RNA sequence: GGGAACGACUCGAGUAGAGUCGAAAAAAUGCCGCCUCAGUUCCAAGCUCUUUCGUGGCACUGUAAACAGUCCUAUUGAGUUAGGGGCGGUCAACCACGUUGCGAAGCUAAAUUAUCUGGUCGAGAGUUACGAUUCCCUACUUCGGUAGGGAAUCAACACUCCGUCUAGCUUCGGCUAGACGGAGUGAAAAGAAACAACAACAACAAC
Reactivity to 2A3 in 0.01 (KOAc 150mM, MgCl2 10mM, bicine 150mM(pH8.5), 24C), signal-to-noise 1, nucleotides 027 to 156: a010a020u090g020c010c000g010c000c000u010c020a040g000u090u000c010c020a050a000g010c000u010c000u010u030u030c060g080u110g020g000c110a020c020u030g210u300a150a190a040c060a050g000u000c000c000u030a030u020u070g010a020g000u030u100a150g000g010g000g000c000g000g000u020c000a000a020c050c010a050c020g000u020u070g010c010g160a000a000g030c020u200a090a160a140u270u120a120u150c110u160g020g050u160c040g020a000g000a020g100u020u050a100c110g000a000u000u000c020c000c020u000a010c000u070u040c120g080g020u000a000g000g040g020a000a000u000c000a000a000

This 207-nucleotide RNA was probed chemically with 2A3. For 2A3, 427 sequencing reads were counted. Source: RMDB library M2RFPK, as collected in RNAgym.